[RMDB]
RNA sequence: GGGAACGACUCGAGUAGAGUCGAAAAGGUUUUUACAAUAUGGAGCAGAGCUUGGAGUAACUCUUGGAGGUCUUGGAAAAAUACUUGAAAUAGCAAUUGGUGCAGCAAUUGGUUCUGCGUUAAAAGAUGCUUUUGGUAAAAUUAAAUCCAUAUUUGGCCCACCAGUAUGAUUCGUCAUACUGGUGGGAAAAGAAACAACAACAACAAC
Reactivity to 2A3 in 0.01 (KOAc 150mM, MgCl2 10mM, bicine 150mM(pH8.5), 24C), signal-to-noise 1, nucleotides 027 to 156: g010g030u210u030u000u010u030a050c060a030a030u060a020u210g040g030a060g010c000a010g000a020g000c000u110u080g020g000a010g020u070a030a060c040u000c020u090u070g130g070a000g030g020u040c030u060u080g030g020a030a000a100a000a000u060a030c000u040u030g050a000a080a060u140a040g000c020a000a020u010u040g100g000u050g010c010a010g010c000a060a270u030u100g020g010u100u000c000u010g040c000g000u000u010a030a100a030a000g020a040u040g040c020u030u010u030u100g060g000u000a080a000a000a080u120u100a080a130a030u020c000c010a030u060a120u270u120u140g030g000

Structure probing data (2A3) for a 207-nucleotide construct. For 2A3, 472 sequencing reads were counted. The RNA was probed in 150 mM KOAc, 10 mM MgCl2 and 150 mM bicine (pH 8.5) at 24 C.